[RMDB]
RNA sequence: GGGAACGACUCGAGUAGAGUCGAAAAACAGGCAGUUUGACCAUCGGCAUGAUGCUCUGUUUCCUCAGUCUCAAACUGACCAUGUGCGGACUAGACGAUAAUACAGGAAAUGUACAUCCGAUGGUGCAUCCCAAGGGGAUUUCGAUCCCCUUGGGAUAAAAGAAACAACAACAACAAC
Reactivity to DMS in 0.01 (KOAc 150mM, MgCl2 10mM, bicine 150mM(pH8.5), 24C), signal-to-noise 3, nucleotides 027 to 126: a030c010a080g000g000c060a040g010u030u000u010g000a180c020c000a010u000c040g000g010c110a010u000g000a090u000g000c030u060c010u060g000u000u000u000c030c020u060c260a020g000u030c000u020c010a050a120a010c040u010g000a220c300c160a120u000g000u000g000c300g010g010a000c030u010a090g010a140c210g000a090u010a060a300u060a010c060a050g000g010a060a100a100u010g030u030a030c090a040u000c020c000g020a020u000g010g000u020g000c120
Reactivity to 2A3 in 0.01 (KOAc 150mM, MgCl2 10mM, bicine 150mM(pH8.5), 24C), signal-to-noise 6, nucleotides 027 to 126: a010c030a010g030g020c010a030g010u040u060u050g030a010c000c000a000u000c010g020g000c030a020u040g060a060u020g060c020u040c040u230g030u030u010u030c000c010u070c040a000g000u000c030u020c170a060a110a050c010u070g110a250c090c110a210u220g080u080g010c020g000g010a020c040u040a140g000a050c070g020a050u100a260a080u170a280c070a040g190g030a080a140a120u270g020u060a050c020a110u000c010c000g000a000u000g000g000u000g000c020
Source information
This 177-nucleotide RNA was probed chemically with DMS and 2A3. Reactivities are rounded to 0.1 and cut off at 0 and 3. High DMS reactivity at an A or C suggests that its Watson-Crick edge is free. 2A3 adducts were read by reverse transcription with SuperScript II with manganese.